[RMDB]
RNA sequence: GGGAACGACUCGAGUAGAGUCGAAAAGCUGAGUUAUGAUGGUUUGAUGCAUCAUAGUCUCAGUAGUGAUCCUGAGACACUCAGCACAGACAGUAUGUCUCUAUGGAUCACUACAUAGAGGCUUGUGCAUCAAACCACAAGCACAUACUGUAGCUGAGUCCACCCUACCGUUCGCGGUAGGGUGGACAAAAGAAACAACAACAACAAC
Reactivity to 2A3 in 0.01 (KOAc 150mM, MgCl2 10mM, bicine 150mM(pH8.5), 24C), signal-to-noise 1, nucleotides 027 to 156: g040c010u010g020a000g010u160u020a130u140g120a140u020g000g000u000u000u000g000a000u010g000c000a000u000c040a050u090a050g030u000c000u000c000a010g000u000a000g010u010g000a000u000c000c010u020g000a000g000a000c000a000c000u120c100a070g100c080a050c020a070g180a040c010a000g100u130a120u100g020u000c000u000c020u050a060u200g000g000a000u000c000a000c000u000a000c000a010u120a020g010a000g010g000c000u050u040g000u000g010c000a000u000c000a000a000a000c000c000a000c000a000a020g040c030a010c010a060u070a060c000u090g090u160a000g040c000u050g020a030